[RMDB]
RNA sequence: GGGAACGACUCGAGUAGAGUCGAAAAGGUAACCAAGUCAAGGAGAAGGAACGGUAGAAAAGAGCGAGCCUCUCGAUACGAAAGGGCCGCGAGCCUAUCGAGUUUGGAGUCAUCCGGGCCGAAGGGUAAGGGAAUCAGUUCGCUGAUUCCAAAAGAAACAACAACAACAAC
Reactivity to 2A3 in 0.01 (KOAc 150mM, MgCl2 10mM, bicine 150mM(pH8.5), 24C), signal-to-noise 9, nucleotides 027 to 129: g050g000u050a030a040c030c010a040a020g070u070c030a030a040g040g010a030g020a060a030g040g020a050a040c060g020g030u100a040g090a050a100a030a000g070a010g020c050g010a010g020c010c000u030c010u000c020g060a070u060a170c080g080a090a030a060g030g000g000c020c010g080c040g010a020g000c010c010u050a070u040c020g020a020g020u030u100u130g050g000a010g030u040c020a040u000c030c000g010g000g010c010c010g020a020a030g030g010g010u070a030a040g070
Reactivity to DMS in 0.01 (KOAc 150mM, MgCl2 10mM, bicine 150mM(pH8.5), 24C), signal-to-noise 9, nucleotides 027 to 129: g020g010u030a050a110c060c050a080a080g010u030c070a040a040g030g000a020g000a030a060g040g000a060a050c090g020g050u010a020g000a040a050a050a040g030a080g000c090g030a030g000c070c020u030c040u010c010g030a090u050a100c140g030a050a080a120g020g020g030c010c020g050c110g010a080g040c070c020u040a030u010c030g010a020g040u010u010u010g000g010a040g000u050c080a070u010c030c020g000g010g020c060c040g020a050a120g000g000g000u070a040a130g010